[RMDB]
RNA sequence: GGGAACGACUCGAGUAGAGUCGAAAAGAUAUGGAGUCUCCGACUGGCAAGGAUACACCGAGGAAGCUCGGAAACGAGCUUCUACCCACCGGUGUAUCCUUGAACUACCAGGGGAGACUCCUAAGUCCAGUCAAUGAUUCUUCGGAAUCAUUGACUGAAAAGAAACAACAACAACAAC
Reactivity to DMS in 0.01 (KOAc 150mM, MgCl2 10mM, bicine 150mM(pH8.5), 24C), signal-to-noise 1, nucleotides 027 to 126: g000a030u000a260u010g000g010a040g010u010c000u000c010c000g070a210c010u000g010g040c000a010a000g000g000a010u000a010c000a000c000c000g000a120g000g030a050a020g010c000u010c000g010g000a070a040a240c030g000a000g040c000u020u010c000u000a080c030c050c130a300c050c020g000g000u000g000u000a000u000c000c000u030u000g000a000a020c140u010a300c030c020a010g000g000g000g000a030g000a030c030u000c000c010u000a010a110g000u000c020